[RMDB]
RNA sequence: GGGAACGACUCGAGUAGAGUCGAAAAAUAAGCAGCCUGUAUAUCGACCUAUCUUGUGAAAAUAGAGAACAGGGAAAGGAAUUGUGGCUUUGGUAAUUUAAGGAGCCUUGAUUAUUUAUGGAGCUGUGUGUUAUGGUAGCCAAAUGUGAUCUACUCAAAUUUAGGUGAUAUUCGUAUCACCUAAAUUAAAAGAAACAACAACAACAAC
Reactivity to 2A3 in 0.01 (KOAc 150mM, MgCl2 10mM, bicine 150mM(pH8.5), 24C), signal-to-noise 3, nucleotides 027 to 156: a000u140a040a020g020c020a020g020c000c010u030g050u050a110u000a040u190c040g020a080c000c040u030a050u130c040u070u070g030u020g090a140a070a030a020u120a100g080a020g030a050a010c020a020g000g020g050a090a030a000g040g030a020a030u060u090g030u030g020g020c000u030u020u030g040g010u060a080a100u100u110u140a090a060g040g000a020g050c000c000u000u010g030a030u020u110a040u100u140u050a070u080g020g020a060g010c030u010g030u010g030u000g060u100u050a070u080g040g000u060a030g000c030c040a030a110a060u130g060u060g050a030u000c000u040a030c020u040c020a020
Reactivity to DMS in 0.01 (KOAc 150mM, MgCl2 10mM, bicine 150mM(pH8.5), 24C), signal-to-noise 3, nucleotides 027 to 156: a090u010a050a100g010c010a110g010c030c010u000g060u010a130u010a070u000c020g030a170c030c030u000a060u010c010u000u010g000u000g010a080a060a090a140u000a070g010a140g010a090a140c030a040g020g010g000a080a060a090g020g000a070a080u000u000g030u000g020g030c040u010u000u010g000g020u010a040a100u000u010u000a080a130g010g020a080g020c030c010u000u000g020a070u000u010a090u000u000u010a070u020g010g000a180g020c030u010g030u000g010u000g010u000u000a060u010g000g020u010a070g010c050c040a030a040a080u000g000u000g000a070u010c030u000a060c020u010c050a140